This 207-nucleotide RNA was probed chemically with 2A3 and DMS.
Values are in units of 0.01, from 0 to 300, in steps of 10.
For DMS the reverse transcriptase was MarathonRT.
High DMS reactivity at an A or C suggests that its Watson-Crick edge is free.
RNA sequence: GGGAACGACUCGAGUAGAGUCGAAAAAUUCAGGCGGAUGGGAAAGCAUGCUCACGUACGGAAACCAUCCCAGUAAUAUAAUGACAGUCAUUGUCUGAGCAUGCGAAAGGAUGGUUGUAAGUGUUGCCUCUAUAAUGAACAGUGAUAUGCGUACGGACUUUCCACUUACUUUCGAGUAAGUGGAAAGAAAAGAAACAACAACAACAAC
Reactivity to 2A3 in 0.01 (KOAc 150mM, MgCl2 10mM, bicine 150mM(pH8.5), 24C), signal-to-noise 2, nucleotides 027 to 156: a000u100u050c050a000g060g010c020g050g000a020u030g040g030g040a090a040a050g000c000a030u010g000c020u050c010a080c020g070u130a020c080g070g000a030a070a020c010c020a030u020c000c020c000a010g020u030a030a090u080a000u090a210a110u120g040a020c020a010g080u240c110a140u300u000g000u010c040u030g000a010g040c000a010u010g010c010g000a000a020a000g070g030a030u090g050g000u070u000g050u110a050a100g020u030g050u070u030g030c040c050u060c000u050a060u050a140a170u130g060a040a040c020a080g020u010g090a040u080a040u200g040c060g010u060a020c060g030g020a020
Reactivity to DMS in 0.01 (KOAc 150mM, MgCl2 10mM, bicine 150mM(pH8.5), 24C), signal-to-noise 3, nucleotides 027 to 156: a090u000u010c070a070g000g010c060g010g000a060u010g000g010g020a120a080a140g020c020a080u010g000c040u020c050a090c060g000u000a080c100g030g000a170a070a050c010c020a050u010c000c000c050a140g020u000a080a070u010a120u000a020a110u000g000a050c010a060g010u010c120a130u000u000g000u000c010u010g000a110g020c020a010u000g010c050g020a090a080a110g010g000a040u000g000g020u000u000g000u000a030a100g030u010g010u010u000g010c020c030u000c030u000a110u000a040a120u010g010a070a060c040a070g020u000g000a140u010a090u000g010c050g020u000a110c050g000g010a170

2A3 adducts were read by reverse transcription with SuperScript II with manganese. Conditions: 150 mM KOAc, 10 mM MgCl2 and 150 mM bicine (pH 8.5), 24 C. The DMS profile rests on 5,312 reads.